Conditions: 150 mM KOAc, 10 mM MgCl2 and 150 mM bicine (pH 8.5), 24 C. Chemical mapping of a 177-nucleotide RNA with DMS and 2A3. Reactivities are given for positions 27 through 126. Values are in units of 0.01, from 0 to 300, in steps of 10. The DMS profile rests on 3,071 reads. For 2A3 the reverse transcriptase was SuperScript II with manganese. Source: RMDB library OK1LIB, as collected in RNAgym. As a SHAPE reagent, 2A3 marks flexible, mostly unpaired nucleotides at the ribose 2'-OH.
[RMDB]
RNA sequence: GGGAACGACUCGAGUAGAGUCGAAAACGAGGACCGCAAGGACUGGUAUGACUUCCACGCUUCGCUGGUCGAACCGUGGGACGGCCCCGCGCUCGUGGCGGCGACCGACGGCGAGCGAGUCGGUGCCACUCAGGCGCACUUUCGAGUGCGCCUGAGUAAAAGAAACAACAACAACAAC
Reactivity to DMS in 0.01 (KOAc 150mM, MgCl2 10mM, bicine 150mM(pH8.5), 24C), signal-to-noise 2, nucleotides 027 to 126: c060g010a160g000g030a130c030c060g030c260a020a130g030g020a180c080u000g010g000u000a060u010g000a110c180u000u000c020c020a070c040g000c170u000u000c000g000c010u020g000g000u020c000g000a040a060c130c010g000u000g010g000g000a000c080g000g010c000c020c060c020g020c050g000c080u030c080g030u010g000g020c050g000g050c060g010a080c060c030g010a080c020g020g000c120g010a170g000c040g000a090g000u030c000g010g050u010g000c000c000
Reactivity to 2A3 in 0.01 (KOAc 150mM, MgCl2 10mM, bicine 150mM(pH8.5), 24C), signal-to-noise 4, nucleotides 027 to 126: c040g030a050g030g050a080c030c010g040c070a050a130g050g030a060c060u100g050g030u190a160u210g080a080c030u050u000c020c000a010c000g010c030u030u030c020g010c080u190g100g090u230c000g000a030a020c010c000g000u030g010g040g020a060c030g030g000c000c000c000c040g030c010g000c010u040c020g070u070g120g110c030g000g020c040g040a050c010c040g050a060c020g030g080c040g010a020g040c010g000a010g020u030c010g000g050u060g080c010c010